[RMDB]
RNA sequence: GGGAACGACUCGAGUAGAGUCGAAAAUACCGUCUUCUCCGCGACGGUUUCAAUCCAUAGCUUCACGUUGUGUAGCGUAGGUGGAAGGUAUCGUGUGGUGUAUAAACACCACAUAGUCUCUUAGGGGUCAAGCUGAUAAACUUCGGUUUAUCAGCAACAUAGUUCCUUCGUUCGCGAAGGAACUAUGAAAAGAAACAACAACAACAAC
Reactivity to DMS in 0.01 (KOAc 150mM, MgCl2 10mM, bicine 150mM(pH8.5), 24C), signal-to-noise 2, nucleotides 027 to 156: u000a040c000c000g000u000c020u000u010c020u000c090c050g040c240g010a030c010g010g020u000u010u000c050a080a080u000c040c020a120u000a190g050c030u000u000c030a040c050g000u000u010g050u000g020u000a070g020c020g030u000a010g020g020u000g030g000a030a080g030g010u010a070u000c040g020u010g010u010g000g040u020g000u000a140u000a110a150a100c000a020c000c000a020c000a000u000a010g020u000c020u010c020u000u000a080g010g010g050g000u000c060a060a160g020c000u000g020a030u000a010a000a010c020u010u000c260g040g010u000u010u000a010u010c000a000g000c000a000a050
Reactivity to 2A3 in 0.01 (KOAc 150mM, MgCl2 10mM, bicine 150mM(pH8.5), 24C), signal-to-noise 4, nucleotides 027 to 156: u090a000c000c000g010u010c010u140u020c040u010c010c010g020c020g010a000c000g010g000u000u040u090c040a020a050u010c010c010a050u030a060g000c000u060u070c020a030c080g300u270u250g020u070g030u070a020g010c040g070u090a100g070g070u020g010g030a040a040g050g020u130a050u160c050g000u010g000u000g010g040u010g050u020a070u090a260a270a010c010a000c000c000a000c000a000u000a000g020u000c000u000c010u100u210a020g000g010g010g000u040c050a070a030g000c000u000g000a000u010a000a000a010c010u030u070c200g060g000u000u010u000a000u000c000a000g000c000a000a000